Overview: Chemical mapping of a 177-nucleotide RNA with DMS. Reactivities are given for positions 27 through 126. Source: RMDB library OK2TST, as collected in RNAgym. The DMS profile rests on 579 reads.
[RMDB]
RNA sequence: GGGAACGACUCGAGUAGAGUCGAAAAGUACGGUGGACCAGGCGAAGCCGUGGCUUAAAUCGGACAGGUGAAAAGACCCAAGAUCUCCAUAGAACGAAACAACAGUGUCCACGACUGACCGCUCGUAAGCACGUACGAGCUUCGGCUCGUACGUGCUAAAAGAAACAACAACAACAAC
Reactivity to DMS in 0.01 (KOAc 150mM, MgCl2 10mM, bicine 150mM(pH8.5), 24C), signal-to-noise 1, nucleotides 027 to 126: g020u000a120c110g020g000u050g000g020a160c030c020a170g000g000c060g020a110a170g000c000c050g030u000g020g000c100u000u000a020a090a120u000c020g010g000a100c090a030g010g000u010g000a090a050a120a110g000a090c000c050c100a090a210g010a120u000c020u020c020c050a040u000a070g000a070a110c120g000a010a090a060c080a250a080c100a070g000u020g000u000c030c030a080c110g000a120c020u000g040a290c000c090g000c120u010c110g010u020a110